[RMDB]
Chemical mapping of a 177-nucleotide RNA with DMS and 2A3.
2A3 adducts were read by reverse transcription with SuperScript II with manganese.
High 2A3 reactivity points to a flexible backbone, as in loops and unpaired stretches.
Source: RMDB library OK2TST, as collected in RNAgym.
Reactivities are given for positions 27 through 126.
The DMS profile rests on 685 reads.

RNA sequence: GGGAACGACUCGAGUAGAGUCGAAAACGCCGCUGAUCCUGAAAUCCGAUGAACUGCUCCCCGACACCGGGGAGGACUCCGAUGAAGACGGCCACAACCAUGGCGGUCACAGUCAUGGCGGUCACGCGAUCAUCGAACAGUUCGCUGUUCGAUGAUCAAAAGAAACAACAACAACAAC
Reactivity to DMS in 0.01 (KOAc 150mM, MgCl2 10mM, bicine 150mM(pH8.5), 24C), signal-to-noise 1, nucleotides 027 to 126: c100g000c020c010g040c060u000g000a080u010c020c030u000g000a050a120a040u010c020c060g000a090u000g060a040a120c120u000g000c030u000c020c000c010c000g040a170c270a140c300c050g000g020g000g010a000g010g000a130c090u000c040c070g000a090u000g000a040a150g010a070c040g000g010c010c010a050c120a110a130c080c090a120u010g020g010c000g000g000u000c170a010c250a070g010u000c050a030u000g000g030c020g000g000u010c030a070c070g030c220
Reactivity to 2A3 in 0.01 (KOAc 150mM, MgCl2 10mM, bicine 150mM(pH8.5), 24C), signal-to-noise 1, nucleotides 027 to 126: c020g000c020c000g040c040u060g030a070u050c000c010u020g060a140a040a020u020c050c010g080a070u110g000a060a060c020u150g020c000u050c030c030c000c000g160a170c080a050c110c070g040g000g000g000a000g010g000a010c020u000c040c010g030a030u060g040a070a050g030a010c060g060g000c000c000a020c010a040a000c020c010a000u010g030g000c070g100g000u130c040a010c000a020g040u030c020a050u040g020g000c020g010g020u020c030a020c070g130c050